[RMDB]
About this RNA:
Chemical mapping of a 207-nucleotide RNA with 2A3 and DMS. High 2A3 reactivity points to a flexible backbone, as in loops and unpaired stretches. The 2A3 profile rests on 1,200 reads.
RNA sequence: GGGAACGACUCGAGUAGAGUCGAAAAACGAAAACUACGCACUCGCAGCUUAAUAACCUGCGCUGAGCCCUUCUCCCCCAGCUUGCCUGUGUCCUAGGGAAUUGCAAGGUCAUCCUUCACAGGAUCGUCUAGGUAAUCCCUUUCGAGGGAUUACCAACUAGUACUGAUGGUUCGCCAUCAGUACUAGAAAAGAAACAACAACAACAAC
Reactivity to 2A3 in 0.01 (KOAc 150mM, MgCl2 10mM, bicine 150mM(pH8.5), 24C), signal-to-noise 2, nucleotides 027 to 156: a000c050g010a030a030a000a030c070u160a030c080g020c060a080c020u020c010g010c010a000g010c000u030u000a020a020u010a040a130c020c010u030g010c010g030c140u080g020a030g040c000c010c060u190u090c120u050c030c000c000c000c010a040g040c040u100u210g050c000c010u020g020u000g000u030c020c040u030a030g040g000g030a080a080u090u110g040c090a150a050g030g000u100c010a040u060c010c000u020u050c010a000c000a030g010g010a010u040c020g080u060c050u060a030g000g000u000a000a000u000c010c000c030u030u010u010c160g090a000g000g010g000a000u000u000a000c000c000a000a000
Reactivity to DMS in 0.01 (KOAc 150mM, MgCl2 10mM, bicine 150mM(pH8.5), 24C), signal-to-noise 2, nucleotides 027 to 156: a100c050g000a080a100a040a110c030u000a040c000g030c010a100c080u000c040g060c070a040g010c060u000u000a100a130u010a120a150c230c020u010g000c050g020c200u010g010a060g000c020c050c040u000u000c030u020c010c010c000c010c030a080g000c050u000u020g010c010c020u000g010u000g000u000c040c030u010a100g010g010g000a100a110u000u000g000c040a110a080g010g010u020c030a060u000c010c010u010u000c130a170c090a100g040g010a070u000c060g010u000c020u000a080g040g020u010a010a010u010c000c020c000u010u010u010c140g040a030g030g010g000a010u000u000a000c030c020a010a060

Conditions: 150 mM KOAc, 10 mM MgCl2 and 150 mM bicine (pH 8.5), 24 C.
Source: RMDB library M2RFPK, as collected in RNAgym.
For 2A3 the reverse transcriptase was SuperScript II with manganese.